[RMDB]
This 177-nucleotide RNA was probed chemically with DMS.
The RNA was probed in 150 mM KOAc, 10 mM MgCl2 and 150 mM bicine (pH 8.5) at 24 C.
The DMS profile rests on 665 reads.
The data come from the RNA Mapping Database (RMDB), library OK2TRN.
Reactivities are given for positions 27 through 126.

RNA sequence: GGGAACGACUCGAGUAGAGUCGAAAAUUUUAGGAUUAGUUCCUGUAACUAUUGCUGGUUUAUUUGUAACUGCAUAUUUACAAUACCGACGUGGUGACCAAGCAACUUGGUAAUAUAUUUGUAUAGAAUGCUCGAAGAGAUUCGUCUCUUCGAGCAUAAAAGAAACAACAACAACAAC
Reactivity to DMS in 0.01 (KOAc 150mM, MgCl2 10mM, bicine 150mM(pH8.5), 24C), signal-to-noise 1, nucleotides 027 to 126: u000u000u010u030a110g040g000a020u010u000a230g000u000u000c010c030u000g010u010a070a010c050u000a020u000u000g020c000u000g010g010u000u000u000a080u020u000u020g010u000a010a010c220u000g010c180a050u010a040u010u010u000a000c040a060a040u030a030c090c010g020a070c200g020u020g010g020u010g000a060c010c040a000a060g010c140a080a100c090u000u000g000g000u000a070a100u010a090u000a060u000u010u010g010u000a110u000a170g000a100